An RNA of 177 nucleotides, treated with DMS and 2A3 and read out base by base. It was measured as part of the RMDB library OK2TRN. The RNA was probed in 150 mM KOAc, 10 mM MgCl2 and 150 mM bicine (pH 8.5) at 24 C. The DMS profile rests on 3,726 reads. The 2A3 profile rests on 1,345 reads. 2A3 adducts were read by reverse transcription with SuperScript II with manganese.
[RMDB]
RNA sequence: GGGAACGACUCGAGUAGAGUCGAAAAUCGAACCAAUUGGCUCGUGCAGCUGCACGUCAGGUUGCAGAUAAUCCGGGUGGUGCGUAUAACCCGUUAUUCCUUUAUGGCGGUACAGGUUUAGGUAAAAAUCUGCCCUAUAGUUCGCUAUAGGGCAGAUAAAAGAAACAACAACAACAAC
Reactivity to DMS in 0.01 (KOAc 150mM, MgCl2 10mM, bicine 150mM(pH8.5), 24C), signal-to-noise 4, nucleotides 027 to 126: u010c040g000a050a070c030c020a210a160u010u010g010g020c060u000c060g030u000g020c080a150g020c080u000g010c050a040c070g020u000c080a080g000g010u000u000g000c010a040g000a070u010a070a080u000c130c060g000g000g010u000g000g010u000g010c060g000u000a080u000a100a080c040c010c010g020u010u000a060u000u000c020c020u010u010u010a120u010g000g010c030g010g020u000a050c080a040g000g010u000u000u000a030g010g010u010a010a060a040a070
Reactivity to 2A3 in 0.01 (KOAc 150mM, MgCl2 10mM, bicine 150mM(pH8.5), 24C), signal-to-noise 1, nucleotides 027 to 126: u080c000g010a010a040c010c010a060a100u150u100g060g010c030u020c070g040u000g000c000a130g100c090u140g000c060a030c080g070u040c070a050g010g130u010u030g060c050a030g030a080u110a080a020u070c020c000g000g010g000u070g030g100u110g020c020g040u140a050u050a220a080c000c000c000g030u040u030a040u080u040c010c030u050u130u000a100u140g020g080c010g040g010u070a020c010a020g060g000u040u080u120a060g030g020u060a140a000a000a000